Source information:
Source: RMDB library M2PK90, as collected in RNAgym. The record gives the reactivity of an RNA of 177 nucleotides to 2A3 and DMS. The DMS profile rests on 19,670 reads. The reactions ran in a buffer of 150 mM KOAc, 10 mM MgCl2 and 150 mM bicine (pH 8.5), at 24 C. 2A3 adducts were read by reverse transcription with SuperScript II with manganese. Reactivities are rounded to 0.1 and cut off at 0 and 3.
[RMDB]
RNA sequence: GGGAACGACUCGAGUAGAGUCGAAAACACAGGCGACUUAAUCGGAGAGCGGUUACACGCGAGGAAGAUGAAAUUAUUACUUCAGUAGACUCGAGAUUACUACAACUUGCGUUGCUAUCUCAAAUAAACCUUACGUAUAUUUCGAUAUACGUAAGGUAAAAGAAACAACAACAACAAC
Reactivity to 2A3 in 0.01 (KOAc 150mM, MgCl2 10mM, bicine 150mM(pH8.5), 24C), signal-to-noise 9, nucleotides 027 to 126: c070a000c020a020g090g020c030g030a050c050u110u160a090a060u130c050g040g000a020g000a010g080c080g030g010u050u120a050c070a000c040g020c010g000a020g030g020a020a040g020a040u090g060a060a090a030u220u160a090u090u110a120c020u020u020c020a030g010u030a020g040a060c030u010c100g070a080g020a110u100u140a060c020u020a020c010a060a020c020u020u030g010c020g020u020u040g000c010u030a050u070c010u010c010a080a130a060u180a090a140
Reactivity to DMS in 0.01 (KOAc 150mM, MgCl2 10mM, bicine 150mM(pH8.5), 24C), signal-to-noise 9, nucleotides 027 to 126: c070a070c130a070g000g010c040g010a070c100u000u000a080a060u000c080g010g010a100g010a100g010c060g010g000u000u010a090c150a080c050g010c030g010a060g000g000a060a040g010a060u000g000a050a100a180u010u010a070u010u000a090c050u000u000c020a080g010u000a060g010a120c060u000c060g010a080g000a080u000u000a060c060u000a040c060a080a240c030u000u000g000c060g010u000u000g010c080u010a080u000c010u000c020a060a050a090u000a060a070